An RNA of 177 nucleotides, treated with DMS and 2A3 and read out base by base. 2A3 is a SHAPE reagent: it acylates the 2'-hydroxyl of flexible nucleotides of all four kinds. For 2A3 the reverse transcriptase was SuperScript II with manganese. The 2A3 profile rests on 6,085 reads. The RNA was probed in 150 mM KOAc, 10 mM MgCl2 and 150 mM bicine (pH 8.5) at 24 C. Values cover nucleotides 27 to 126.
RNA sequence: GGGAACGACUCGAGUAGAGUCGAAAAGAUAUGGACCUGGAGCUGCUCAACUAUUCGGAAACGAACGAAUUGAGAACUACAGCCACUCAGGUCCUAAGUCAAAGAAUAGCGCUUCGGCGCUAUUCAACAUAAAUAUAACGUUCGCGUUAUAUUUAUGAAAAGAAACAACAACAACAAC
Reactivity to DMS in 0.01 (KOAc 150mM, MgCl2 10mM, bicine 150mM(pH8.5), 24C), signal-to-noise 5, nucleotides 027 to 126: g000a050u000a300u010g000g000a010c020c000u000g010g020a180g010c000u000g010c020u000c000a000a030c080u000a300u000u000c000g000g000a120a100a200c040g000a010a010c090g010a060a060u000u000g010a030g010a070a010c050u010a260c020a010g000c000c050a090c120u000c010a000g010g010u000c000c010u000a010a070g000u000c050a100a100a130g000a020a020u000a000g010c000g020c000u000u020c200g020g010c000g010c000u010a000u000u000c000a070a200
Reactivity to 2A3 in 0.01 (KOAc 150mM, MgCl2 10mM, bicine 150mM(pH8.5), 24C), signal-to-noise 3, nucleotides 027 to 126: g020a010u090a030u150g000g010a000c000c000u000g000g030a030g020c010u020g010c000u010c000a020a040c100u080a080u060u020c010g000g080a100a150a090c030g020a060a010c020g050a280a300u010u030g020a000g000a040a010c090u220a070c200a020g020c010c010a180c060u180c020a000g000g000u020c000c010u000a010a010g010u000c020a150a040a030g000a010a000u000a000g000c010g000c020u050u070c300g110g000c000g000c000u010a010u000u000c010a000a000